[RMDB]
RNA sequence: GGGAACGACUCGAGUAGAGUCGAAAACAUGUUCCGGGUCAUAAAAAUAUGACUAUCGGUCAUUUAUCUCAAUUAUCAAUGACAAUGGAUAAAACUGAAAUACCUGGAUUAGAUGAUUUACAUCAUCGGACUACUUGAUCUUCGGAUCAAGUAGUCCAAAAGAAACAACAACAACAAC
Reactivity to 2A3 in 0.01 (KOAc 150mM, MgCl2 10mM, bicine 150mM(pH8.5), 24C), signal-to-noise 3, nucleotides 027 to 126: c050a010u130g000u160u000c000c000g030g000g000u000c040a010u070a120a120a130a120a210u120a110u100g020a010c000u050a140u140c030g010g040u000c040a050u060u030u040a100u050c050u000c070a040a170u170u120a060u050c040a070a040u060g050a110c070a080a110u120g060g020a070u060a100a170a060a100c070u160g140a040a110a000u120a070c040c040u040g090g020a100u040u120a110g010a010u010g020a020u080u140u170a070c140a050u000c020a000u010c010